This 177-nucleotide RNA was probed chemically with DMS and 2A3.
The DMS profile rests on 3,237 reads.
It was measured as part of the RMDB library TTRDES.
The RNA was probed in 150 mM KOAc, 10 mM MgCl2 and 150 mM bicine (pH 8.5) at 24 C.

RNA sequence: GGGAACGACUCGAGUAGAGUCGAAAAGAUAUGGACCAUGGGCUUCGAGGAUCGAACGGUUUCGGAAACGAAAUUUCGGGAGAAGCCAUGGUCCUAAGUCAAACCGAUUGUCUUCGGACAAUCGGAAUCAGAGGAAAGUGUUCGCACUUUCCUCUGAAAAAGAAACAACAACAACAAC
Reactivity to DMS in 0.01 (KOAc 150mM, MgCl2 10mM, bicine 150mM(pH8.5), 24C), signal-to-noise 2, nucleotides 027 to 126: g000a020u000a020u010g010g000a010c000c000a020u010g000g010g020c000u010u000c000g000a090g010g010a000u010c010g010a010a000c300g000g020u010u010u000c000g010g000a010a010a000c000g030a010a010a020u000u010u000c000g000g000g010a010g000a040a010g010c000c000a010u000g010g010u010c000c000u000a000a080g000u010c000a140a130a300c010c000g000a010u000u000g000u010c010u000u020c290g030g010a020c000a000a000u000c000g000g000a030a030
Reactivity to 2A3 in 0.01 (KOAc 150mM, MgCl2 10mM, bicine 150mM(pH8.5), 24C), signal-to-noise 1, nucleotides 027 to 126: g000a010u010a000u060g000g000a000c000c010a010u020g000g220g140c040u000u010c020g110a300g040g000a010u000c000g000a000a030c080g060g000u000u010u010c010g000g020a010a010a000c000g000a020a000a000u020u020u000c000g000g000g000a050g000a010a010g000c000c000a000u010g010g010u000c000c000u010a000a010g000u000c000a020a020a150c000c000g000a010u000u010g000u000c000u010u080c300g130g020a020c000a010a010u010c000g000g040a020a140